[RMDB]
RNA sequence: GGGAACGACUCGAGUAGAGUCGAAAAAAUAAUCUUCAGGGCAGGGUGAAAUUCCCGAUCGGCGGUAACGUCCGCGAGCCGAACGAAAAAGGUUUGGCAGGAACCGGUGAGAUUCCGGUACCGACAGCAAAGCCUCAACACUUCGGUGUUGAGGCAACUAGUACAAAUAGUUCGCUAUUUGUACUAGAAAAGAAACAACAACAACAAC
Reactivity to 2A3 in 0.01 (KOAc 150mM, MgCl2 10mM, bicine 150mM(pH8.5), 24C), signal-to-noise 2, nucleotides 027 to 156: a000a000u170a030a020u020c030u160u100c070a050g080g030g000c020a020g000g040g020u030g020a030a050a040u060u020c000c020c040g020a130u200c010g010g000c020g000g000u020a030a030c000g020u000c010c010g010c020g000a000g000c000c000g000a020a010c010g130a040a020a130a010a040g130g000u000u010u000g000g010c000a000g000g030a020a010c000c010g010g000u000g000a010g000a000u020u010c000c000g000g000u010a010c000c010g060a020c020a020g100c050a120a040a040g010c000c000u000c000a000a000c000a000c010u060u090c220g090g000u000g000u000u000g000a000g010g020c000a000a000
Reactivity to DMS in 0.01 (KOAc 150mM, MgCl2 10mM, bicine 150mM(pH8.5), 24C), signal-to-noise 2, nucleotides 027 to 156: a030a080u000a100a030u010c040u000u010c040a110g030g020g010c040a060g000g000g020u000g010a070a040a260u000u000c000c000c000g010a100u020c040g020g030c040g010g010u000a090a120c110g010u000c050c000g000c000g010a150g010c040c020g000a050a300c030g010a050a070a110a150a180g010g030u000u000u000g030g010c010a050g020g000a130a030c040c000g040g000u000g000a270g000a300u010u000c000c050g000g010u000a020c010c000g010a050c070a070g030c070a050a130a160g000c020c010u000c020a010a000c010a000c010u010u000c260g030g030u020g040u000u010g000a000g020g000c000a010a010
The data come from the RNA Mapping Database (RMDB), library M2RFPK. Chemical mapping of a 207-nucleotide RNA with 2A3 and DMS. For 2A3, 2,006 sequencing reads were counted. 2A3 adducts were read by reverse transcription with SuperScript II with manganese.